[RMDB]
RNA sequence: GGGAACGACUCGAGUAGAGUCGAAAACGGAGUAAAAUAAAAUAAAGUCCUCAAAAUAAAAAUAAAUAAAGAGGACAAGUCCGAAACUCCGAGAAACGGCAAAAAUAAGAAAUAAAAGUCCUCAUUCGUGAGGACAAAAGAAACAACAACAACAAC
Reactivity to 2A3 in 0.01 (KOAc 150mM, MgCl2 10mM, bicine 150mM(pH8.5), 24C), signal-to-noise 1, nucleotides 027 to 135: c000g000g020a020g000u040a100a000a060a230u160a000a130a120a100u130a130a160a060g010u000c000c000u000c000a120a120a010a000u200a060a140a030a000a010u170a000a050a040u170a040a210a030g000a000g000g010a000c000a000a000g030u030c000c000g000a090a020a040c000u000c000c000g000a020g070a080a040a010c030g030g000c060a000a070a080a000a030u160a060a030g120a130a100a030u170a050a130a030a000g000u000c000c050u010c000a000u020u030c130g090u010g000a000g000g020a000c010a000
Structure probing data (2A3) for a 155-nucleotide construct. For 2A3 the reverse transcriptase was SuperScript II with manganese. For 2A3, 627 sequencing reads were counted.